[RMDB]
RNA sequence: GGGAACGACUCGAGUAGAGUCGAAAAGUGAUUAUCACCUAUGUCCGGAUCAAUUGCCUCAAUCUGGAAUUGAGAUCAUGAACUAUUAAAUGUUAUCUCAAUGGCAAUGGUAACACCAACAUUAAUACCCGCUGAUACGAUUCGUCGUAUCAGCGGGAAAAGAAACAACAACAACAAC
Reactivity to 2A3 in 0.01 (KOAc 150mM, MgCl2 10mM, bicine 150mM(pH8.5), 24C), signal-to-noise 2, nucleotides 027 to 126: g070u020g020a300u050u050a010u070c010a000c000c110u140a100u160g100u000c060c000g040g000a030u100c210a020a250u040u120g080c000c000u020c060a000a000u030c010u000g100g000a020a000u010u010g000a000g010a000u010c000a000u100g030a040a040c010u100a040u300u020a220a230a040u160g000u000u220a000u000c000u000c000a000a000u020g000g000c000a000a050u000g030g000u000a000a000c020a000c030c030a000a050c000a180u100u000a130a000u130a040
Source information
Conditions: 150 mM KOAc, 10 mM MgCl2 and 150 mM bicine (pH 8.5), 24 C. Chemical mapping of a 177-nucleotide RNA with 2A3. The 2A3 profile rests on 946 reads.